[RMDB]
RNA sequence: GGGAACGACUCGAGUAGAGUCGAAAAGAUAUGGACGUGAGCCUGGCGCACUUCUUGGACCUGUGCGUAACAUCAGUCGGAAACGACUGUGGCACAGCUAGAAGGAUCCAGGCUCACGUCCUAAGUCCUAACCCUCUCCGUUCGCGGAGAGGGUUAGAAAAGAAACAACAACAACAAC
Reactivity to DMS in 0.01 (KOAc 150mM, MgCl2 10mM, bicine 150mM(pH8.5), 24C), signal-to-noise 1, nucleotides 027 to 126: g000a080u010a300u020g000g000a010c000g000u020g000a020g010c000c000u000g010g010c190g000c300a290c000u000u000c010u000u000g020g000a170c300c000u000g000u000g030c010g010u000a090a160c170a050u050c000a000g010u010c010g000g000a190a050a250c010g040a030c020u000g050u010g000g130c000a000c000a000g060c010u010a010g020a000a010g000g000a260u000c000c000a000g000g000c000u010c000a000c000g000u000c000c010u000a030a060g000u000c010
Structure probing data (DMS) for a 177-nucleotide construct. Reactivities are given for positions 27 through 126. For DMS the reverse transcriptase was MarathonRT. For DMS, 973 sequencing reads were counted.